RNA sequence: GGGAACGACUCGAGUAGAGUCGAAAAGAUAUGGAGAACAGACAUGCUCCUCUAUCGGAAACGAUAGCCCGGGAGCAACAGCUGUCCUCCUAAGUCAAAGUGAAUCGGGGUUCGCCCCGAUUCACAAGUUACUGAUCAUGUUCGCAUGAUCAGUAACAAAAGAAACAACAACAACAAC
Reactivity to DMS in 0.01 (KOAc 150mM, MgCl2 10mM, bicine 150mM(pH8.5), 24C), signal-to-noise 4, nucleotides 027 to 126: g010a030u000a300u020g000g000a020g010a030a010c010a020g020a040c080a180u010g000c010u000c010c000u010c000u000a000u000c000g030g000a110a070a150c010g000a020u000a010g020c300c170c210g000g010g000a020g000c020a000a030c090a110g000c010u000g000u000c040c010u000c000c000u010a000a050g010u000c010a110a090a130g000u000g000a030a000u000c000g020g000g010g010u000u010c300g010c020c010c000c000g000a010u000u000c010a000c000a010a020
Reactivity to 2A3 in 0.01 (KOAc 150mM, MgCl2 10mM, bicine 150mM(pH8.5), 24C), signal-to-noise 2, nucleotides 027 to 126: g040a030u090a040u150g000g000a010g000a020a010c010a000g160a040c040a100u100g010c010u000c010c000u110c000u010a010u010c010g020g040a090a070a030c000g000a010u010a010g060c160c250c060g040g010g000a010g000c040a020a030c020a070g050c000u010g000u000c010c000u040c000c000u020a110a040g040u020c060a180a070a040g010u000g000a000a000u000c000g000g000g010g040u050u070c130g210c000c000c000c000g000a000u000u000c010a000c000a000a000
The record gives the reactivity of an RNA of 177 nucleotides to DMS and 2A3. It was measured as part of the RMDB library TTRDEL. DMS adducts were read by reverse transcription with MarathonRT. High 2A3 reactivity points to a flexible backbone, as in loops and unpaired stretches. The RNA was probed in 150 mM KOAc, 10 mM MgCl2 and 150 mM bicine (pH 8.5) at 24 C.